This 207-nucleotide RNA was probed chemically with 2A3 and DMS. 2A3 is a SHAPE reagent: it acylates the 2'-hydroxyl of flexible nucleotides of all four kinds. The reactions ran in a buffer of 150 mM KOAc, 10 mM MgCl2 and 150 mM bicine (pH 8.5), at 24 C. Reactivities are given for positions 27 through 156.
RNA sequence: GGGAACGACUCGAGUAGAGUCGAAAACACGGAGAAGACCUCCAGCUCCGACCUCUAUGAACGGCUGGCUCGUUACUGCGAUGAACAGAUCUCCAAGGCAAUCCUCGGCCAGACGCUGACUUCCGACUCGGGCGGCGGCAGUUACGCACAGAGCAAGUCAUAGUUGCUAAUUCGUUAGCAACUAUGAAAAAGAAACAACAACAACAAC
Reactivity to 2A3 in 0.01 (KOAc 150mM, MgCl2 10mM, bicine 150mM(pH8.5), 24C), signal-to-noise 7, nucleotides 027 to 156: c070a020c030g030g010a020g030a140a040g130a150c020c040u010c030c010a010g030c010u030c030c000g080a100c030c040u100c040u120a180u210g060a100a020c030g040g010c020u020g020g000c020u040c080g070u060u090a100c030u060g020c020g070a110u080g050a120a040c040a070g060a110u030c020u030c050c040a050a050g030g000c020a030a120u090c000c020u030c040g020g000c000c020a020g020a050c040g000c030u020g040a110c020u070u010c020c020g060a090c060u070c100g010g040g010c020g000g000c000g020g000c000a020g010u040u040a050c080g000c030a010c020a060g060a010g030c030a080a010g050
Reactivity to DMS in 0.01 (KOAc 150mM, MgCl2 10mM, bicine 150mM(pH8.5), 24C), signal-to-noise 3, nucleotides 027 to 156: c010a180c060g000g030a090g010a150a120g050a130c040c050u010c000c030a150g000c000u000c010c000g010a120c020c010u000c040u020a070u010g020a100a080c070g010g020c030u020g020g060c020u000c060g020u000u000a100c040u020g000c020g010a120u000g010a110a300c000a080g010a100u000c030u010c020c010a040a120g010g010c030a080a120u000c020c010u010c040g010g030c020c010a110g000a050c010g010c020u000g020a060c050u010u000c050c020g030a060c030u000c030g010g000g000c020g010g000c060g030g000c020a060g010u000u000a050c030g020c040a100c030a150g010a050g000c030a120a110g010